[RMDB]
RNA sequence: GGGAACGACUCGAGUAGAGUCGAAAAACGACGAUCGUCGCGACGACGGUCAGGACUCGCUGCUCGAGGACCUCCCGGACGCAGACGCCGACGGUCCCUCGAGGGCGUUCCGAGCGGCCCAGCAGGACGGCUACCUUCGACGCUCGGAGAGCGACGAUAUUCAAGACGGUUUCGACCGUCUUGAAUAAAAAGAAACAACAACAACAAC
Reactivity to 2A3 in 0.01 (KOAc 150mM, MgCl2 10mM, bicine 150mM(pH8.5), 24C), signal-to-noise 3, nucleotides 027 to 156: a000c050g060a020c100g020a010u010c000g020u040c030g010c100g140a110c110g000a000c020g100g010u040c060a010g010g040a030c030u020c070g030c080u300g030c010u020c000g000a000g000g000a000c000c000u020c040c080c000g010g000a060c090g030c150a070g020a230c100g090c030c000g000a020c040g000g030u030c150c000c000u010c010g010a030g000g010g020c010g010u070u000c010c000g000a010g000c030g010g060c000c010c070a040g050c030a050g050g000a030c040g100g000c080u120a110c000c000u040u040c020g050a020c010g020c010u010c010g040g020a040g020a000g010c020g020a020c010g010a010
Reactivity to DMS in 0.01 (KOAc 150mM, MgCl2 10mM, bicine 150mM(pH8.5), 24C), signal-to-noise 2, nucleotides 027 to 156: a070c040g000a150c120g000a070u000c000g020u000c000g000c150g020a220c120g040a070c000g000g030u000c020a080g010g010a190c040u000c020g000c040u000g000c020u000c010g000a050g050g010a090c020c060u000c080c030c000g010g020a110c090g000c090a140g030a130c020g040c070c020g000a210c090g000g010u010c030c010c000u010c050g000a100g000g020g000c020g010u010u010c010c000g000a040g040c000g020g000c030c070c030a130g010c040a110g000g010a130c060g000g020c050u000a040c010c070u000u000c040g000a050c000g000c030u000c010g020g000a070g010a080g020c040g030a080c050g010a240
Source: RMDB library OK3TST, as collected in RNAgym. The record gives the reactivity of an RNA of 207 nucleotides to 2A3 and DMS. For DMS the reverse transcriptase was MarathonRT. Conditions: 150 mM KOAc, 10 mM MgCl2 and 150 mM bicine (pH 8.5), 24 C. Values cover nucleotides 27 to 156.